[RMDB]
RNA sequence: GGGAACGACUCGAGUAGAGUCGAAAAAUUGCCGACAAGGUCCGAUAGAUGACGCGAAUACUUAGGGGUUGAAACGCAGUCCUACACGGAGCGCGUAGGAGCGUCAAUGAGAAUGAUCUGAAGACGCGAUUAUAUAUAUAUUCGUAUAUAUAUAAUCAAAAGAAACAACAACAACAAC
Reactivity to DMS in 0.01 (KOAc 150mM, MgCl2 10mM, bicine 150mM(pH8.5), 24C), signal-to-noise 4, nucleotides 027 to 126: a110u030u010g000c030c000g000a070c120a070a110g000g000u000c000c030g000a210u010a070g000a130u010g020a020c010g000c000g010a080a060u010a030c090u020u020a080g020g000g010g020u000u010g010a060a100a070c080g010c030a150g010u000c010c020u030a030c110a110c040g000g020a090g020c070g000c130g010u000a030g010g010a140g010c000g010u000c010a010a180u010g000a060g010a140a110u010g010a080u000c000u010g000a160a120g000a040c070g000c040
Reactivity to 2A3 in 0.01 (KOAc 150mM, MgCl2 10mM, bicine 150mM(pH8.5), 24C), signal-to-noise 3, nucleotides 027 to 126: a000u130u090g050c020c000g040a110c070a070a070g090g050u000c000c000g040a030u070a120g120a080u130g010a040c010g000c030g070a020a080u080a140c050u090u110a080g060g030g000g050u060u100g080a090a110a010c030g000c030a020g040u020c000c010u070a040c110a000c070g040g040a010g070c040g030c000g000u020a040g060g030a010g000c000g000u000c000a020a070u110g020a010g070a170a130u250g050a050u000c000u040g030a100a020g030a060c010g000c010
Notes: The record gives the reactivity of an RNA of 177 nucleotides to DMS and 2A3. It was measured as part of the RMDB library OK1LIB. Values cover nucleotides 27 to 126. Conditions: 150 mM KOAc, 10 mM MgCl2 and 150 mM bicine (pH 8.5), 24 C.